Structure probing data (2A3 and DMS) for a 177-nucleotide construct. Conditions: 150 mM KOAc, 10 mM MgCl2 and 150 mM bicine (pH 8.5), 24 C. For DMS, 1,680 sequencing reads were counted.
[RMDB]
RNA sequence: GGGAACGACUCGAGUAGAGUCGAAAAAUGGCCUAUACUCUAAAAACUGCAGAAUAUGCAUGCUUGUUUUUUGAACGCCAGCGGUCAGGAUUUAAGCGAAAUUAAGUUCGAUAAGCUGACAUGACGCGGAAUUAAAGGUUUUCGAACCUUUAAUUCCAAAAGAAACAACAACAACAAC
Reactivity to 2A3 in 0.01 (KOAc 150mM, MgCl2 10mM, bicine 150mM(pH8.5), 24C), signal-to-noise 2, nucleotides 027 to 126: a020u030g040g000c020c000u130a130u040a200c090u100c030u040a030a000a030a100a060c020u040g000c000a010g090a290a170u200a050u300g040c100a040u040g030c040u120u090g010u060u030u010u000u030u050g020a060a000c000g010c020c010a010g000c060g010g010u000c030a050g020g120a120u110u050u090a120a050g080c030g090a060a030a000u180u100a160a120g230u010u040c010g000a000u010a090a020g030c010u020g020a040c010a030u100g010a020c070g060c090
Reactivity to DMS in 0.01 (KOAc 150mM, MgCl2 10mM, bicine 150mM(pH8.5), 24C), signal-to-noise 3, nucleotides 027 to 126: a120u000g020g010c020c030u000a140u010a150c150u010c040u010a050a050a020a090a040c050u010g000c000a030g020a150a130u000a130u010g000c110a100u010g010c080u000u000g000u020u010u000u000u000u000g010a110a170c180g000c020c010a010g010c030g010g010u000c090a060g030g000a080u030u000u010a020a050g020c020g020a070a040a140u000u000a060a070g000u000u000c000g020a060u010a090a130g010c010u000g010a040c030a100u010g010a100c180g010c210